[RMDB]
RNA sequence: GGGAACGACUCGAGUAGAGUCGAAAAGAUAUGGAUCCCUUGCUUUGAUCUACCAUUCGGAAACGAAUGUGUAGGGAGCUUGGGAUCCUAAGUCGAAUCUGCAUCAGGGUUCGCCCUGAUGCAGAAACUUAUUGCCCAAGUUCGCUUGGGCAAUAAGAAAAGAAACAACAACAACAAC
Reactivity to 2A3 in 0.01 (KOAc 150mM, MgCl2 10mM, bicine 150mM(pH8.5), 24C), signal-to-noise 2, nucleotides 027 to 126: g000a000u030a000u060g000g000a010u000c000c000c000u010u000g030c030u200u170u300g220a290u060c000u010a000c000c000a000u000u010c000g030g010a010a020a020c000g000a000a010u010g020u030g000u010a000g020g080g100a010g000c000u010u020g000g050g000a000u020c000c000u010a000a000g010u000c010g010a020a140u020c000u000g000c000a000u000c000a000g110g000g060u080u140c230g180c030c020c000u000g010a000u000g000c000a000g010a000a000a000
Reactivity to DMS in 0.01 (KOAc 150mM, MgCl2 10mM, bicine 150mM(pH8.5), 24C), signal-to-noise 2, nucleotides 027 to 126: g000a020u000a110u010g000g000a010u000c000c000c000u000u000g010c000u000u000u000g020a100u010c000u000a010c000c000a020u000u000c010g030g000a030a020a090c000g010a010a010u000g010u020g030u000a000g020g000g010a000g010c000u000u000g000g010g010a010u010c000c010u000a000a040g000u000c000g000a150a150u000c000u010g010c000a010u000c000a010g000g000g030u000u010c260g040c000c000c000u000g000a000u000g000c000a000g000a010a030a110
Source: RMDB library TTRDEL, as collected in RNAgym. The record gives the reactivity of an RNA of 177 nucleotides to 2A3 and DMS. Values cover nucleotides 27 to 126. For DMS the reverse transcriptase was MarathonRT. In probing experiments dimethyl sulfate is read out at A N1 and C N3, which are open when not base-paired. For 2A3 the reverse transcriptase was SuperScript II with manganese. The DMS profile rests on 4,426 reads.